[RMDB]
RNA sequence: GGGAACGACUCGAGUAGAGUCGAAAAUGUUGAAAAAGGCUCAAAAAGUGGAUAACUUGCUGGGAUCAAGGUUAAAACUGGGUUUUUCGGAUGUUUUCCUAAGUAUUAAUACUUCAUCAAUAUAUGGACUUAGUAGCCUGUUCGCAGGCUACUAAGUAAAAGAAACAACAACAACAAC
Reactivity to DMS in 0.01 (KOAc 150mM, MgCl2 10mM, bicine 150mM(pH8.5), 24C), signal-to-noise 1, nucleotides 027 to 126: u030g000u000u000g000a050a080a070a110a030g000g000c020u030c010a070a130a050a060a060g010u000g000g010a110u010a020a080c040u000u060g010c100u000g010g000g050a050u020c040a000a110g000g020u000u030a090a090a060a100c060u030g010g020g000u000u020u000u000u000c130g000g000a010u000g010u000u000u020u060c000c000u010a010a080g010u000a010u030u000a050a120u050a030c070u010u010c110a040u040c030a010a020u060a100u020a300u040g010g000
Reactivity to 2A3 in 0.01 (KOAc 150mM, MgCl2 10mM, bicine 150mM(pH8.5), 24C), signal-to-noise 1, nucleotides 027 to 126: u060g010u020u000g030a000a140a000a000a000g040g000c020u030c020a010a130a100a000a050g070u100g030g130a100u050a080a030c020u010u030g000c000u140g050g060g000a000u030c030a000a000g020g050u050u030a000a160a000a110c020u070g000g000g030u000u000u000u000u030c000g000g000a040u010g080u030u020u000u000c000c000u030a050a040g010u000a060u150u200a130a050u050a030c020u070u040c020a120u100c050a160a000u140a020u050a070u230g120g030